[RMDB]
RNA sequence: GGGAACGACUCGAGUAGAGUCGAAAAUGGCCGGAGAAGGUGAAAGCCCUGUAGACGAAAUCCAGAGUGGGAAUUAGUGGUAUCCUGAGUAAUACAUCACACGUGGAACGAUGUAUGAACCCGCGCGUCCAAACACCCUUUUCGAAGGGUGUUUGGAAAAAGAAACAACAACAACAAC
Reactivity to DMS in 0.01 (KOAc 150mM, MgCl2 10mM, bicine 150mM(pH8.5), 24C), signal-to-noise 2, nucleotides 027 to 126: u060g000g030c010c060g060g000a110g020a100a080g010g000u000g000a090a120a200g030c010c010c030u000g030u050a050g000a090c020g010a020a060a070u010c070c000a100g010a040g000u000g010g040g040a030a060u000u020a070g020u010g000g000u000a060u000c030c020u010g000a180g010u090a090a050u010a000c070a030u000c060a150c040a090c090g090u040g050g010a120a150c180g010a000u000g000u000a000u030g030a070a070c080c000c050g030c080g040c100g000
Reactivity to 2A3 in 0.01 (KOAc 150mM, MgCl2 10mM, bicine 150mM(pH8.5), 24C), signal-to-noise 2, nucleotides 027 to 126: u120g000g000c030c000g000g050a070g020a000a090g030g000u180g030a140a000a040g040c000c000c000u030g020u040a130g030a020c060g040a040a040a040u000c000c020a000g040a050g060u190g030g080g020a040a130u040u060a040g130u040g070g020u070a100u150c060c050u010g000a010g050u120a000a000u030a000c080a040u000c000a000c070a000c100g130u030g040g040a120a020c120g000a000u000g000u010a030u000g000a080a000c000c000c000g050c010g000c000g080
The record gives the reactivity of an RNA of 177 nucleotides to DMS and 2A3. Values cover nucleotides 27 to 126. For DMS the reverse transcriptase was MarathonRT. The reactions ran in a buffer of 150 mM KOAc, 10 mM MgCl2 and 150 mM bicine (pH 8.5), at 24 C. Source: RMDB library RFM100, as collected in RNAgym. The 2A3 profile rests on 770 reads.